An RNA of 177 nucleotides, treated with DMS and 2A3 and read out base by base. The reactions ran in a buffer of 150 mM KOAc, 10 mM MgCl2 and 150 mM bicine (pH 8.5), at 24 C. The 2A3 profile rests on 530 reads. The DMS profile rests on 812 reads.

RNA sequence: GGGAACGACUCGAGUAGAGUCGAAAACAGAGGCUCCCAGGAUGAUGAUGCCAAUGAUGCCACAGAUGGGAAUGACAUUUCUCUUGAGCUAGUUGGAGAUUUUGAUUCCUAACUCUCAAUGUCAUACUAGCACAGCACUUUUCGAAGUGCUGUGCUAAAAAGAAACAACAACAACAAC
Reactivity to DMS in 0.01 (KOAc 150mM, MgCl2 10mM, bicine 150mM(pH8.5), 24C), signal-to-noise 1, nucleotides 027 to 126: c230a110g010a110g000g080c080u000c000c010c050a100g000g000a030u000g000a120u020g010a000u000g030c010c020a020a020u000g010a000u110g000c000c000a030c230a010g010a020u030g000g000g000a050a000u000g070a100c170a300u050u080u010c000u000c010u000u050g100a220g000c040u000a180g100u000u000g000g170a050g000a120u050u000u000u000g000a080u020u000c000c000u080a000a080c020u000c000u000c270a040a030u000g000u000c100a030u000a190c300
Reactivity to 2A3 in 0.01 (KOAc 150mM, MgCl2 10mM, bicine 150mM(pH8.5), 24C), signal-to-noise 2, nucleotides 027 to 126: c000a000g030a030g010g060c050u090c030c070c000a000g000g000a080u000g000a000u000g000a000u010g000c000c000a100a000u080g000a090u120g040c050c000a260c070a060g120a250u300g010g000g000a020a020u020g020a070c020a050u050u050u000c080u010c000u010u070g020a050g050c000u020a000g010u020u020g000g100a300g000a300u000u000u000u070g050a020u080u020c000c000u020a070a070c040u020c000u000c090a020a200u070g130u090c020a030u080a060c030